RNA sequence: GGGAACGACUCGAGUAGAGUCGAAAAGAUAUGGACCUAAAUAGGGAGAAGGUUAUCGGAAACGAUAACCCUUCGAGGAUCUAUGGGUCCUAAGUCAAACUAAAUCUCUCUUCGGAGAGAUUUAGAAGGAAAGUAAUACCUUCGGGUAUUACUUUCCAAAAGAAACAACAACAACAAC
Reactivity to 2A3 in 0.01 (KOAc 150mM, MgCl2 10mM, bicine 150mM(pH8.5), 24C), signal-to-noise 1, nucleotides 027 to 126: g000a000u000a000u080g000g000a000c000c000u070a260a210a300u160a100g000g000g000a030g000a010a000g000g000u010u000a000u000c000g010g000a000a000a000c000g000a020u000a020a020c040c100c010u000u000c010g040a170g000g050a000u050c000u000a080u160g020g010g000u010c000c000u000a000a000g000u000c020a090a090a090c000u010a000a000a010u010c000u020c000u020c000u080u100c300g040g000a010g000a000g010a000u000u010u000a020g020a030a060
Reactivity to DMS in 0.01 (KOAc 150mM, MgCl2 10mM, bicine 150mM(pH8.5), 24C), signal-to-noise 1, nucleotides 027 to 126: g020a010u000a040u000g000g000a020c000c000u000a030a100a120u010a030g010g010g000a000g010a040a030g000g020u000u000a010u010c000g000g030a010a030a000c000g010a000u010a010a020c300c220c140u030u000c000g000a150g010g000a010u020c000u010a070u010g030g010g000u000c000c000u000a000a070g000u000c000a120a110a280c030u000a000a000a020u000c000u000c000u000c000u000u000c220g020g000a000g010a010g000a000u000u000u000a010g010a180a170
An RNA of 177 nucleotides, treated with 2A3 and DMS and read out base by base. For 2A3, 2,026 sequencing reads were counted. The DMS profile rests on 1,422 reads. The RNA was probed in 150 mM KOAc, 10 mM MgCl2 and 150 mM bicine (pH 8.5) at 24 C. High 2A3 reactivity points to a flexible backbone, as in loops and unpaired stretches.